[RMDB]
RNA sequence: GGGAACGACUCGAGUAGAGUCGAAAAUCGGCGUGCUCCUUUGGUGAUUCGGCGACUGGUUACAGGAGAGUAGGCAGUGAGCUAUGGGCAAACCUCUACAGUAUUACUUAGAGGGAAUGUGCAAUUGUGUAUACGAAGUUUUCGAACUUCGUAUACAAAAAGAAACAACAACAACAAC
Reactivity to DMS in 0.01 (KOAc 150mM, MgCl2 10mM, bicine 150mM(pH8.5), 24C), signal-to-noise 8, nucleotides 027 to 126: u010c050g000g010c030g030u010g000c030u000c020c020u000u010u010g000g010u010g000a090u010u010c040g010g030c030g000a060c030u010g000g010u010u010a060c080a090g010g010a100g000a090g010u010a090g010g010c110a070g010u020g000a110g010c050u010a060u010g010g000g010c020a040a080a140c010c000u000c000u000a010c240a030g020u010a140u030u040a040c020u000u010a010g000a010g000g000g010a050a060u020g010u000g000c070a070a090u010u030g010
Reactivity to 2A3 in 0.01 (KOAc 150mM, MgCl2 10mM, bicine 150mM(pH8.5), 24C), signal-to-noise 9, nucleotides 027 to 126: u100c020g000g010c020g020u070g040c020u050c030c000u090u070u120g070g010u090g050a110u090u040c020g030g010c010g040a030c020u020g120g060u070u060a040c040a070g020g080a060g040a020g060u040a030g040g020c050a030g010u010g080a050g010c020u060a070u110g010g020g000c010a060a050a070c000c000u000c000u010a040c070a050g050u060a160u280u150a120c010u000u020a000g000a000g020g040g040a040a110u110g020u040g060c020a050a090u180u130g110
Chemical mapping of a 177-nucleotide RNA with DMS and 2A3. The 2A3 profile rests on 18,116 reads. Conditions: 150 mM KOAc, 10 mM MgCl2 and 150 mM bicine (pH 8.5), 24 C. It was measured as part of the RMDB library OK1LIB. For DMS, 29,035 sequencing reads were counted.